[RMDB]
RNA sequence: GGGAACGACUCGAGUAGAGUCGAAAAGAUGAAGCAAUGAAAGAUUGUAAAUAUGUCUUGAGUGUAGCAUCUCCGGUGUUUUUCGGUAAAACAGACGAUGCAGAAGUGAUGGCGAAGCCUGCCAUUGAAUACAUAGUCAUUUCGAUGACUAUGUAUUAAAAGAAACAACAACAACAAC
Reactivity to 2A3 in 0.01 (KOAc 150mM, MgCl2 10mM, bicine 150mM(pH8.5), 24C), signal-to-noise 9, nucleotides 027 to 126: g040a010u100g040a120a030g030c030a030a040u080g080a190a080a030g190a050u040u030g030u160a060a160a060u270a110u160g050u010c010u030u110g040a090g030u080g060u160a030g030c010a020u000c010u010c040c020g090g020u070g070u040u050u020u040u110c060g050g040u140a050a040a030a020c020a020g100a040c060g020a020u060g000c020a010g050a160a010g050u090g070a030u020g000g020c030g030a060a020g090c030c070u060g000c030c010a010u010u050g030
Reactivity to DMS in 0.01 (KOAc 150mM, MgCl2 10mM, bicine 150mM(pH8.5), 24C), signal-to-noise 9, nucleotides 027 to 126: g010a030u010g010a090a120g010c020a050a030u010g010a190a070a060g000a040u000u000g010u020a090a110a130u060a090u030g000u000c010u000u000g000a170g000u000g010u010a090g010c020a010u000c020u000c070c070g000g020u010g010u000u000u000u010u020c140g000g010u020a030a030a050a060c080a060g010a090c100g010a060u000g010c060a070g000a090a080g010u020g000a020u000g000g010c020g010a080a100g010c080c030u010g000c010c010a030u000u010g000